[RMDB]
RNA sequence: GGGAACGACUCGAGUAGAGUCGAAAAGAAAGAAAGUACUGAAAGUAUUGUGGGAAAUAAUGUGUAAAUCAUUGACCGUUCCUGCGCUGGUAAGAAUAAAAUUUUACUCCAGACACCACCAGUAUAACCAAUCUAGUGACCUUCGGGUCACUAGAAACUCAAUCUAGCUCUUCGGAGCUAGAUUGAGAAAAGAAACAACAACAACAAC
Reactivity to 2A3 in 0.01 (KOAc 150mM, MgCl2 10mM, bicine 150mM(pH8.5), 24C), signal-to-noise 1, nucleotides 027 to 156: g090a010a120a020g050a040a070a040g010u040a020c050u080g020a060a140a120g060u120a100u170u060g000u000g020g000g040a000a000a130u140a060a020u030g020u000g020u170a040a000a130u230c010a020u010u090g020a040c040c070g000u000u000c010c000u020g000c040g020c000u000g010g010u110a060a090g100a080a040u160a120a100a050a070u010u120u070u070a000c030u000c000c010a000g000a050c000a020c050c030a000c020c000a000g010u000a040u010a060a060c030c030a030a050u010c000u000a000g000u000g000a000c000c000u040u080c300g080g000g000u000c000a000c000u000a000g000a000a000a000